[RMDB]
RNA sequence: GGGAACGACUCGAGUAGAGUCGAAAACGACGAGCAUGUGCGGCGUCACCGGGAUCAAACCGACGUGGGGCCGGGUCAGCCGUCACGGCGUCGUCGAACUUGCGGCAAGCUACGACCACGUCGGGCCCACUACUGCGCGGUUCGCCGCGCAGUAGUGAAAAGAAACAACAACAACAAC
Reactivity to 2A3 in 0.01 (KOAc 150mM, MgCl2 10mM, bicine 150mM(pH8.5), 24C), signal-to-noise 2, nucleotides 027 to 126: c040g010a000c000g050a000g000c070a040u160g020u030g040c060g000g050c010g000u020c060a080c130c010g000g000g010a140u260c110a120a010a050c010c000g160a190c080g080u120g000g020g120g060c000c000g030g030g000u050c070a030g010c000c010g030u100c050a020c040g010g000c050g220u040c030g000u030c010g010a120a090c050u060u100g060c000g000g000c040a090a100g070c100u090a020c030g070a070c050c000a030c110g000u000c000g000g000g000c000c020
Record summary
Structure probing data (2A3) for a 177-nucleotide construct. The RNA was probed in 150 mM KOAc, 10 mM MgCl2 and 150 mM bicine (pH 8.5) at 24 C.